[RMDB]
This 207-nucleotide RNA was probed chemically with DMS and 2A3.
The 2A3 profile rests on 1,094 reads.
The data come from the RNA Mapping Database (RMDB), library M2RFPK.
For 2A3 the reverse transcriptase was SuperScript II with manganese.
For DMS, 1,871 sequencing reads were counted.
The reactions ran in a buffer of 150 mM KOAc, 10 mM MgCl2 and 150 mM bicine (pH 8.5), at 24 C.

RNA sequence: GGGAACGACUCGAGUAGAGUCGAAAAGAAAGAAAGAAAGCGGUUGGGUGGGUCCAUCGACCUUCGUGGCGUAUUCGGACGCUUUACCACGACGCGAGGAAAUAGCGAGACCGACCACCCCCUUUAACAGAGGUAUAGUAGUUCGCUACUAUACCAACAUAUUUCCUACCUUCGGGUAGGAAAUAUGAAAAGAAACAACAACAACAAC
Reactivity to DMS in 0.01 (KOAc 150mM, MgCl2 10mM, bicine 150mM(pH8.5), 24C), signal-to-noise 1, nucleotides 027 to 156: g000a170a060a100g010a080a090a120g000a050a180a090g020c160g010g010u000u000g070g010g030u040g000g010g020u000c040c060a150u000c060g050a110c060c010u020u010c000g020u000g010g000c020g000u000a120u010u030c080g010g010a170c150g030c110u000u000u010a090c060c040a090c000g010a030c010g010c040g010a070g010g010a090a070a200u000a120g000c060g010a160g040a100c010c010g000a040c000c000a060c000c000c000c010c000u000u000u000a060a240c130a220g040a090g000g010u000a000u010a030g030u010a030g000u000u010c300g000c010u000a020c010u000a000u000a010c010c010a030a030
Reactivity to 2A3 in 0.01 (KOAc 150mM, MgCl2 10mM, bicine 150mM(pH8.5), 24C), signal-to-noise 2, nucleotides 027 to 156: g040a010a010a000g020a010a060a020g040a000a090a000g060c140g070g090u130u120g090g040g010u040g050g030g070u020c020c020a060u040c020g080a160c010c010u040u050c050g040u030g010g000c030g000u040a090u060u200c060g050g020a000c030g070c120u160u070u080a070c010c000a010c020g100a010c030g010c050g010a020g010g050a060a040a130u060a130g060c010g000a010g040a050c020c020g010a010c020c000a060c010c000c010c000c010u040u080u080a070a040c090a020g050a050g170g000u000a000u000a020g000u000a000g010u000u040c190g010c150u000a000c000u000a000u000a000c010c000a000a000